An RNA of 177 nucleotides, treated with 2A3 and DMS and read out base by base. The data come from the RNA Mapping Database (RMDB), library TTRDES. Conditions: 150 mM KOAc, 10 mM MgCl2 and 150 mM bicine (pH 8.5), 24 C.

RNA sequence: GGGAACGACUCGAGUAGAGUCGAAAAGAUAUGGAGAACUGAAUUGCGAAGAACUGUAAGGGUCGGAAACGACCUACAGGGAGCAACAGUUCUCCUAAGUCAAAAGAUAGUUCUUCGGAACUAUCAAUCAACUUGUAUGGUUCGCCAUACAAGUUGAAAAAGAAACAACAACAACAAC
Reactivity to 2A3 in 0.01 (KOAc 150mM, MgCl2 10mM, bicine 150mM(pH8.5), 24C), signal-to-noise 2, nucleotides 027 to 126: g000a000u010a000u060g000g000a020g000a000a010c000u000g020a300a300u280u030g020c000g180a300a040g020a000a100c000u000g010u070a090a230g120g000g000u000c010g000g000a000a000a000c010g000a000c040c010u000a000c000a000g040g020g010a050g000c000a010a010c000a000g000u000u010c000u000c000c000u010a000a000g000u000c010a060a020a020a040g000a000u000a010g010u030u000c010u060u080c300g090g010a000a010c000u000a000u000c000a000a150
Reactivity to DMS in 0.01 (KOAc 150mM, MgCl2 10mM, bicine 150mM(pH8.5), 24C), signal-to-noise 3, nucleotides 027 to 126: g010a010u000a020u010g000g020a010g000a000a000c000u000g000a210a250u010u000g020c010g040a110a260g020a170a230c000u000g000u010a150a160g000g000g010u000c010g020g000a010a000a030c000g000a000c000c000u000a000c000a000g000g000g000a000g020c000a040a070c000a010g000u000u000c000u000c000c000u000a000a060g000u000c000a120a090a130a150g000a010u000a000g000u000u000c000u000u010c260g020g010a010a010c000u000a010u000c000a130a130